[RMDB]
RNA sequence: GGGAACGACUCGAGUAGAGUCGAAAACCCAGCGUAUGCUAAGCGACCCGUACCGCAAACCGACACAGGUGGGUGGGUAGAAUAUACCAAGGCGUAAGAGUGAAACCUGGUUAAGGAACUCGGCAAAACACUACCCGUAGUUCGCUACGGGUAGUGUAAAAGAAACAACAACAACAAC
Reactivity to DMS in 0.01 (KOAc 150mM, MgCl2 10mM, bicine 150mM(pH8.5), 24C), signal-to-noise 4, nucleotides 027 to 126: c000c010c000a140g000c110g030u000a020u010g000c050u010a070a130g000c030g010a050c030c010c040g030u020a110c020c020g000c100a020a040a030c020c010g000a100c200a100c110a110g000g000u010g000g000g020u000g010g010g000u000a020g030a090a080u030a070u030a060c050c020a120a130g000g010c080g000u020a100a110g010a090g010u010g010a150a100a080c010c020u000g000g010u010u050a100a100g000g040a110a070c030u000c000g010g010c130a070a080a090
Reactivity to 2A3 in 0.01 (KOAc 150mM, MgCl2 10mM, bicine 150mM(pH8.5), 24C), signal-to-noise 3, nucleotides 027 to 126: c000c000c000a010g010c030g040u150a010u140g020c020u010a080a020g030c000g040a120c000c000c000g090u100a030c040c020g080c090a030a060a060c010c020g150a060c080a020c000a230g040g000u030g020g020g030u100g000g010g000u030a040g060a030a020u250a030u030a070c030c010a060a030g070g000c020g040u080a130a040g010a010g070u090g100a110a010a020c020c000u020g160g000u150u090a080a060g010g000a010a030c000u000c000g010g000c070a050a020a010